[RMDB]
RNA sequence: GGGAACGACUCGAGUAGAGUCGAAAACGCUGGGUCGAGGAGGACAGGUUGCUACUGAAGCGCGCACGGUAGAACUCCUGUCUACCCACCCCGACCUGUGCUGAAGCGCGCACGGCAACCGAAAGGUGCGAAACGGACACUGUUCGCAGUGUCCGAACCGUACUUUUCAGUUCGCUGAAAAGUACGGAAAAGAAACAACAACAACAAC
Reactivity to 2A3 in 0.01 (KOAc 150mM, MgCl2 10mM, bicine 150mM(pH8.5), 24C), signal-to-noise 4, nucleotides 027 to 156: c060g010c030u070g010g010g010u010c000g070a240g120g010a060g000g060a000c000a010g020g040u300u200g130c010u000a000c010u030g040a210a050g020c010g000c000g000c010a040c040g020g000u030a020g020a230a060c040u010c010c010u010g000u010c010u050a100c010c010c010a050c000c000c000c000g000a000c000c020u100g070u090g060c010u090g030a160a050g000c000g000c000g000c020a010c010g040g000c020a070a070c010c000g030a060a070a070g020g020u050g010c030g060a120a120a000c020g000g000a000c000a000c010u040g040u090u130c270g000c120a000g000u000g000u000c000c000g000a010a010
Reactivity to DMS in 0.01 (KOAc 150mM, MgCl2 10mM, bicine 150mM(pH8.5), 24C), signal-to-noise 2, nucleotides 027 to 156: c070g020c010u000g000g020g040u000c000g010a040g040g040a300g000g010a070c000a010g000g040u000u010g010c060u000a080c010u020g000a010a100g000c010g020c020g040c020a300c050g040g020u000a030g010a050a030c040u000c040c010u000g000u000c040u000a070c010c040c090a300c020c000c010c010g020a000c010c010u000g020u000g020c010u010g000a090a080g000c040g090c020g050c030a170c060g020g010c000a140a070c050c000g030a060a050a060g010g000u000g020c000g030a070a130a280c020g010g000a040c010a000c000u010g020u010u020c300g000c010a000g010u000g080u000c000c010g000a000a010
Structure probing data (2A3 and DMS) for a 207-nucleotide construct. For DMS the reverse transcriptase was MarathonRT. The RNA was probed in 150 mM KOAc, 10 mM MgCl2 and 150 mM bicine (pH 8.5) at 24 C.